[RMDB]
RNA sequence: GGGAACGACUCGAGUAGAGUCGAAAAGUGUGAACGUGUUCGAGUGAGAGUGUUCGUGAACUCGAGUGAGUGAUCGAGAACACGAACGAUCGAGUACACGAGAGUACUCGUUCUCUCGUGAGAGUGUUCACGUUCACACGAGUACGUACUCUCUCACGCGCGUGUGAGGAUUCGUCCUCACACGCGCAAAAGAAACAACAACAACAAC
Reactivity to 2A3 in 0.01 (KOAc 150mM, MgCl2 10mM, bicine 150mM(pH8.5), 24C), signal-to-noise 2, nucleotides 027 to 156: g030u010g000u000g000a030a000c020g000u000g050u030u030c040g020a040g110u090g050a000g000a000g020u170g000u010u000c000g000u000g010a000a000c010u020c020g030a040g020u190g080a160g070u130g050a140u010c010g010a010g000a000a000c000a010c020g000a000a000c020g000a020u050c000g000a000g040u040a000c080a020c130g100a120g010a000g150u040a010c000u000c040g100u170u020c000u020c000u000c030g000u050g020a080g000a000g030u250g080u110u080c010a000c000g000u000u000c000a000c000a010c010g000a000g010u000a000c000g020u060a050c000u000c000u000c000u010c060a090c010
The record gives the reactivity of an RNA of 207 nucleotides to 2A3. It was measured as part of the RMDB library OK3TST. Conditions: 150 mM KOAc, 10 mM MgCl2 and 150 mM bicine (pH 8.5), 24 C. Values cover nucleotides 27 to 156.